RNA sequence: GGGAACGACUCGAGUAGAGUCGAAAAGCUGAUCGGUCUCGGACUGAACAAGAUGCACCGUCGCCGCACGCUGGAAGAUACUCCGGCUGUUCGUGGCAUGAUCCGUGCUGUCCAGCAUCUCGUUCGCCAGUAGGAGGUCGUUCGCGACCUCCUACUGAAAAGAAACAACAACAACAAC
Reactivity to DMS in 0.01 (KOAc 150mM, MgCl2 10mM, bicine 150mM(pH8.5), 24C), signal-to-noise 2, nucleotides 027 to 126: g030c020u020g040a070u000c020g000g000u000c020u030c170g000g000a000c080u040g020a090a060c200a130a030g000a080u000g000c000a070c100c070g010u000c020g050c000c020g000c000a180c100g000c000u000g000g000a070a150g000a250u120a150c160u000c000c000g010g010c020u030g020u010u000c060g000u000g000g000c010a100u010g000a030u010c140c230g000u000g030c050u030g000u000c030c010a150g050c000a060u000c000u000c000g000u010u000c040g040c070
Reactivity to 2A3 in 0.01 (KOAc 150mM, MgCl2 10mM, bicine 150mM(pH8.5), 24C), signal-to-noise 5, nucleotides 027 to 126: g020c020u030g010a090u080c040g010g080u050c050u050c100g070g030a050c040u120g040a080a050c050a130a040g050a060u110g000c060a030c080c070g090u040c080g000c010c000g000c000a010c050g010c000u000g060g010a080a030g090a160u170a190c040u000c000c000g030g010c080u130g030u080u110c070g020u030g010g000c040a050u130g010a060u030c020c050g010u020g010c010u020g030u020c090c000a000g000c000a030u020c030u020c010g050u050u040c070g060c080